Chemical mapping of a 177-nucleotide RNA with 2A3 and DMS. For DMS, 1,332 sequencing reads were counted.

RNA sequence: GGGAACGACUCGAGUAGAGUCGAAAAGCAUCGUCAUCGAUGACGGCGAUGAGAGCUGUUGUAGUUGUAAACGGUUUAUGGGAUUUACGCGCAAUUUACUGGCAACUUUCAUUGCUCUGCACUGGGAGAUGCAGUCGAGUUUCGACUCGACUGCAUCAAAAGAAACAACAACAACAAC
Reactivity to 2A3 in 0.01 (KOAc 150mM, MgCl2 10mM, bicine 150mM(pH8.5), 24C), signal-to-noise 2, nucleotides 027 to 126: g030c000a010u000c010g120u000c010a040u110c100g260a150u250g070a070c070g000g000c020g000a000u000g010a010g010a020g010c020u010g010u040u010g000u010a090g000u000u010g070u050a150a110a060c100g030g060u070u070u070a080u200g100g000g000a080u060u020u090a030c050g000c010g000c040a000a070u180u010u090a050c020u020g100g000c000a030a010c020u000u060u000c020a030u060u040g000c000u000c040u110g000c040a020c070u010g010g000g070a160
Reactivity to DMS in 0.01 (KOAc 150mM, MgCl2 10mM, bicine 150mM(pH8.5), 24C), signal-to-noise 1, nucleotides 027 to 126: g000c060a050u000c000g000u030c070a160u000c110g000a200u070g000a090c050g030g000c040g010a050u000g000a060g020a020g000c030u000g060u050u000g000u000a040g000u020u050g010u070a130a080a070c030g000g000u030u000u010a050u000g010g000g010a150u060u000u000a030c070g050c120g030c060a000a000u000u050u000a060c100u070g050g000c000a000a110c020u040u000u000c040a110u000u010g010c010u020c040u000g000c040a110c110u010g000g000g000a240

For 2A3 the reverse transcriptase was SuperScript II with manganese.